[RMDB]
RNA sequence: GGGAACGACUCGAGUAGAGUCGAAAACGUUCGAACGGCUGAAUGCUCUAUAGAUAGUGAAACAGGUGAUAUCGGCGCAUCGACUACGUGCCUGUCUCGGCUACGAUCAGCCGGGGUGCAUGUGCCAAGUGUGUCUUCGUUUCGACGAGGACGCGCUAAAAGAAACAACAACAACAAC
Reactivity to DMS in 0.01 (KOAc 150mM, MgCl2 10mM, bicine 150mM(pH8.5), 24C), signal-to-noise 2, nucleotides 027 to 126: c300g000u020u010c130g020a300a060c000g010g000c000u000g000a030a020u000g000c060u000c070u020a080u010a040g000a080u000a050g010u000g000a040a030a050c060a040g000g000u000g010a060u030a070u000c040g010g000c080g000c080a040u010c010g000a040c080u000a030c060g000u000g000c010c060u000g010u010c010u010c010g000g000c000u000a080c210g000a110u020c100a020g010c010c010g010g000g000g010u000g000c030a000u000g000u000g010c040c020a090
Reactivity to 2A3 in 0.01 (KOAc 150mM, MgCl2 10mM, bicine 150mM(pH8.5), 24C), signal-to-noise 9, nucleotides 027 to 126: c010g000u060u040c010g000a030a040c020g030g000c010u030g060a100a040u130g050c010u000c030u050a100u050a150g120a110u060a040g130u090g120a070a060a020c030a030g010g060u040g070a070u060a060u210c040g010g000c020g000c050a050u050c030g050a060c040u080a040c060g050u050g010c000c010u030g010u020c000u000c000g020g010c000u040a040c110g190a170u130c080a000g000c000c000g000g000g000g000u020g000c010a020u040g010u020g030c010c010a020